[RMDB]
RNA sequence: GGGAACGACUCGAGUAGAGUCGAAAAUCGGCUGCUGCAGACCGGGGUGUGCUGGAAGGAUCUGGGUCUAGUCGUGGUUGACGAGGAACAGUGGUUCGGCGUCGAGCACAAGGAGCACAUCAAGUCACAGUAGCACUACUUUCGAGUAGUGCUACUGAAAAGAAACAACAACAACAAC
Reactivity to DMS in 0.01 (KOAc 150mM, MgCl2 10mM, bicine 150mM(pH8.5), 24C), signal-to-noise 4, nucleotides 027 to 126: u000c050g010g020c020u000g020c080u020g010c060a080g020a070c050c040g010g020g030g030u000g000u010g010c010u010g010g020a120a120g010g010a040u010c050u020g010g020g000u000c030u010a080g010u010c140g020u000g000g000u010u000g010a030c010g000a100g000g010a020a030c030a240g010u000g010g020u000u000c020g000g010c030g010u010c010g010a040g010c010a030c030a110a130g010g030a070g010c050a060c060a060u000c070a090a080g010u000c100a220
Reactivity to 2A3 in 0.01 (KOAc 150mM, MgCl2 10mM, bicine 150mM(pH8.5), 24C), signal-to-noise 4, nucleotides 027 to 126: u080c030g030g020c030u040g000c020u040g040c040a030g040a080c010c040g030g000g000g080u030g000u020g020c010u050g040g080a070a060g030g020a040u040c050u190g120g030g000u000c030u050a060g040u030c090g030u030g030g300u030u050g020a020c010g010a040g060g000a040a000c020a100g250u300g130g070u210u030c040g290g010c010g020u010c010g020a020g010c000a010c010a010a060g060g010a030g030c020a010c010a050u040c040a020a050g070u080c020a010